Chemical mapping of a 177-nucleotide RNA with DMS and 2A3. The reactions ran in a buffer of 150 mM KOAc, 10 mM MgCl2 and 150 mM bicine (pH 8.5), at 24 C. Source: RMDB library TTRDEL, as collected in RNAgym.

RNA sequence: GGGAACGACUCGAGUAGAGUCGAAAAGAUAUGGACUUAUAGUGACAUGUCCGUCGGAAACGACGGUACAACAGCACUGUAAGUCCUAAGUCAAAGAGAGAUUUCUACUUCGGUAGAAAUCUCUCAAGAUUCAGACCUAGUUCGCUAGGUCUGAAUCAAAAGAAACAACAACAACAAC
Reactivity to DMS in 0.01 (KOAc 150mM, MgCl2 10mM, bicine 150mM(pH8.5), 24C), signal-to-noise 1, nucleotides 027 to 126: g000a030u000a170u010g010g010a000c000u000u000a000u000a000g000u020g030a270c040a180u000g010u000c000c000g010u000c000g000g000a030a010a150c000g010a030c000g000g010u010a010c000a040a070c300a090g000c020a020c010u000g000u000a000a010g000u000c010c000u000a000a060g000u000c020a080a090a130g010a010g010a020g000a010u000u000u000c000u010a010c010u000u010c170g040g000u000a000g000a000a000a000u000c000u000c000u000c000a000a090
Reactivity to 2A3 in 0.01 (KOAc 150mM, MgCl2 10mM, bicine 150mM(pH8.5), 24C), signal-to-noise 1, nucleotides 027 to 126: g010a010u040a020u080g010g000a000c000u000u000a000u000a040g010u020g100a160c030a150u020g030u030c020c000g010u010c000g000g050a030a060a000c000g000a010c000g060g050u140a010c000a020a020c030a040g150c000a000c020u020g020u010a000a000g000u000c000c000u000a000a010g000u000c030a020a220a000g000a010g000a000g010a020u000u000u040c010u000a010c000u030u100c300g000g000u000a020g010a000a000a000u010c000u000c000u020c000a010a000